[RMDB]
RNA sequence: GGGAACGACUCGAGUAGAGUCGAAAAGUGCUGAUUGAAAUUCAUGGGAGCCUCUCCAUAAUGGAUGAACGCCGCGCUAGUUCGCGCAGUCGCGACGUAAACGCUCUGUAUUCCCGUUCAGGCCUCAGCACCAUACUAUGUUCGCAUAGUAUGGUGCAAAAGAAACAACAACAACAAC
Reactivity to DMS in 0.01 (KOAc 150mM, MgCl2 10mM, bicine 150mM(pH8.5), 24C), signal-to-noise 4, nucleotides 027 to 126: g010u000g010c020u000g020a120u010u000g010a100a120a080u000u000c040a040u010g000g030g000a070g010c060c060u010c070u000c010c010a100u010a090a090u000g000g000a040u010g010a090a070c040g010c030c010g010c020g020c030u000a100g020u000u000c200g020c160g010c100a040g010u010c030g010c020g000a020c030g000u000a050a070a110c120g000c010u000c020u000g010u010a170u000u000c010c000c010g020u010u010c100a050g000g000c050c080u010c100a170
Reactivity to 2A3 in 0.01 (KOAc 150mM, MgCl2 10mM, bicine 150mM(pH8.5), 24C), signal-to-noise 3, nucleotides 027 to 126: g020u030g000c010u020g070a170u130u070g050a160a110a010u120u080c050a060u090g010g000g060a030g010c020c030u060c030u000c020c020a090u230a300a060u170g040g000a020u070g020a050a000c020g000c020c010g010c010g000c020u050a030g060u080u120c080g010c010g000c090a010g170u270c040g000c000g010a000c020g020u020a010a040a090c030g010c010u000c010u000g020u070a100u020u010c010c010c020g010u100u070c050a030g000g100c010c010u050c050a010

Chemical mapping of a 177-nucleotide RNA with DMS and 2A3. The reactions ran in a buffer of 150 mM KOAc, 10 mM MgCl2 and 150 mM bicine (pH 8.5), at 24 C. In probing experiments dimethyl sulfate is read out at A N1 and C N3, which are open when not base-paired. For 2A3 the reverse transcriptase was SuperScript II with manganese.